The record gives the reactivity of an RNA of 177 nucleotides to 2A3 and DMS. 2A3 adducts were read by reverse transcription with SuperScript II with manganese.
RNA sequence: GGGAACGACUCGAGUAGAGUCGAAAAGUAAAGGAGGGAUGGCGGGCAAGUUUUUCCGCAGUACGGGUUUCAUCCAGUGAGGAAUACAGCCGGACAUCACGACCGCUGCGGGCCAGACCGUUCAGGGAUAAUAAAGUCUGUUCGCAGACUUUAUUAUAAAAGAAACAACAACAACAAC
Reactivity to 2A3 in 0.01 (KOAc 150mM, MgCl2 10mM, bicine 150mM(pH8.5), 24C), signal-to-noise 2, nucleotides 027 to 126: g060u080a050a070a060g020g070a070g070g050g000a030u100g030g060c070g070g010g040c060a050a030g020u030u040u040u130u080c000c000g000c000a000g020u050a030c050g000g010g060u020u110u200c020a060u030c010c010a020g040u030g090a100g010g100a070a110u210a120c030a030g070c030c010g000g020a020c020a020u090c040a000c070g040a020c040c050g000c020u020g000c010g000g020g000c010c010a030g010a060c000c000g000u050u060c050a020g030g000g030
Reactivity to DMS in 0.01 (KOAc 150mM, MgCl2 10mM, bicine 150mM(pH8.5), 24C), signal-to-noise 6, nucleotides 027 to 126: g020u010a060a090a140g010g010a150g000g000g000a070u010g010g020c080g010g000g010c110a070a100g010u000u000u000u000u010c000c000g010c050a020g010u000a080c120g010g010g000u000u010u000c170a080u010c020c050a070g010u000g000a070g020g010a090a070u010a070c110a200g010c030c030g010g000a040c090a080u010c120a040c090g000a110c030c030g000c020u000g010c030g010g000g000c120c100a090g000a100c050c020g010u000u000c070a070g000g010g000
For DMS the reverse transcriptase was MarathonRT.
For DMS, 6,766 sequencing reads were counted.
The 2A3 profile rests on 1,898 reads.